Structure probing data (2A3 and DMS) for a 177-nucleotide construct. High 2A3 reactivity points to a flexible backbone, as in loops and unpaired stretches. DMS adducts were read by reverse transcription with MarathonRT.
RNA sequence: GGGAACGACUCGAGUAGAGUCGAAAAUGUGCUCUUUCCCCAUGGGAGCCCAGUGUGCAAUGGCUGCAAACAGUAGCCUCCUUGGUAGUGUAUGCAGCCUGUUGAUUGUACAGGUUGCCCUAAGGGAAUGAUCCAAGAAUUUCGAUUCUUGGAUCAUAAAAGAAACAACAACAACAAC
Reactivity to 2A3 in 0.01 (KOAc 150mM, MgCl2 10mM, bicine 150mM(pH8.5), 24C), signal-to-noise 7, nucleotides 027 to 126: u080g020u040g030c030u010c010u010u050u020c000c000c000c010a050u100g000g000g010a010g010c000c030c050a220g090u070g010u010g080c010a030a060u070g000g000c000u000g000c010a020a050a020c010a020g090u150a040g110c000c000u050c050c090u080u100g030g000u040a070g110u020g000u020a020u040g000c010a000g000c010c010u020g020u040u100g030a100u020u030g010u020a000c010a010g020g000u040u120g210c000c010c000u010a050a070g000g000g010a020
Reactivity to DMS in 0.01 (KOAc 150mM, MgCl2 10mM, bicine 150mM(pH8.5), 24C), signal-to-noise 7, nucleotides 027 to 126: u020g010u000g010c070u000c020u000u000u010c010c000c000c040a170u020g010g000g000a070g010c050c020c300a110g030u000g000u000g010c010a030a040u000g010g010c000u000g000c000a020a080a020c020a040g010u010a150g010c000c010u030c280c140u010u020g010g020u000a100g010u000g010u000a060u000g000c010a010g000c010c000u000g010u010u010g010a150u010u000g010u000a010c000a090g000g000u000u010g010c000c010c000u020a220a160g000g000g000a140
It was measured as part of the RMDB libraries RFM100 and RFMREP. Reactivities are given for positions 27 through 126.